[RMDB]
This 177-nucleotide RNA was probed chemically with DMS and 2A3.
RNA sequence: GGGAACGACUCGAGUAGAGUCGAAAAGAGGAUCUCUCGGCGAACUGGCUUCCGGCGAGGAACUGGAACCUCCUGGGGGUCGCGGCGGCGCUCUGUGACCAUCUGUACCUCGAGGGGGAAGACGACGCACAUCAGUCAAGUUCGCUUGACUGAUGUGAAAAGAAACAACAACAACAAC
Reactivity to DMS in 0.01 (KOAc 150mM, MgCl2 10mM, bicine 150mM(pH8.5), 24C), signal-to-noise 4, nucleotides 027 to 126: g000a080g000g000a080u010c040u010c030u000c060g020g010c020g010a080a090c070u010g010g000c070u010u000c030c020g000g010c090g020a090g020g010a070a070c100u000g000g000a120a160c030c010u010c010c010u010g010g000g000g020g010u000c050g030c070g000g010c290g030g020c060g010c040u010c060u010g000u010g000a110c030c010a070u000c040u000g010u010a090c040c000u000c030g030a060g000g000g000g000g000a110a060g000a080c060g000a100c160g010
Reactivity to 2A3 in 0.01 (KOAc 150mM, MgCl2 10mM, bicine 150mM(pH8.5), 24C), signal-to-noise 2, nucleotides 027 to 126: g100a020g050g030a110u020c030u000c020u030c080g020g020c020g020a110a050c050u060g080g000c030u060u020c050c000g010g040c070g020a050g040g040a040a050c070u070g060g100a080a080c020c000u000c000c020u040g000g000g000g040g000u070c060g000c020g070g010c030g020g000c030g000c040u090c090u170g070u040g050a180c000c010a050u050c040u090g080u100a070c000c000u020c030g070a040g000g010g010g020g010a050a000g050a020c060g000a030c050g010
Source: RMDB library OK2TST, as collected in RNAgym. For DMS the reverse transcriptase was MarathonRT. The reactions ran in a buffer of 150 mM KOAc, 10 mM MgCl2 and 150 mM bicine (pH 8.5), at 24 C. The DMS profile rests on 3,894 reads.